[RMDB]
RNA sequence: GGGAACGACUCGAGUAGAGUCGAAAAUCGAUUUCGCCAACGCUUGGCGAUGAAGUCGCGAGCCAUCGGGUCGCCAAGUCCUGCCUUCGACUUCUCUGACAGCAUGACUGCCCUUCGAGGCAUUCAACCCUCGUCUAUGUUUCGACAUAGACGAGGGAAAAGAAACAACAACAACAAC
Reactivity to DMS in 0.01 (KOAc 150mM, MgCl2 10mM, bicine 150mM(pH8.5), 24C), signal-to-noise 3, nucleotides 027 to 126: u010c070g000a110u010u000u000c040g020c030c020a070a140c300g000c190u000u000g020g000c010g000a010u020g000a110a080g030u000c050g020c130g020a100g020c050c040a070u020c080g010g020g010u010c040g000c040c060a040a130g000u000c060c050u020g010c070c040u000u010c010g000a040c020u000u000c030u000c020u020g010a080c170a110g000c090a150u010g000a050c080u000g010c000c010c030u030u000c240g000a140g000g020c000a020u000u010c030a070a130
Reactivity to 2A3 in 0.01 (KOAc 150mM, MgCl2 10mM, bicine 150mM(pH8.5), 24C), signal-to-noise 2, nucleotides 027 to 126: u070c010g040a020u070u100u030c030g040c020c000a090a050c130g040c300u120u080g070g000c020g010a000u040g030a070a020g050u050c030g000c070g090a020g050c020c010a070u070c050g020g000g060u020c000g010c040c000a020a010g020u000c000c020u000g040c000c010u020u040c010g020a030c000u010u040c020u000c040u080g050a020c050a060g050c020a060u110g010a050c020u020g020c020c010c000u040u100c120g020a150g000g020c020a020u020u040c010a020a080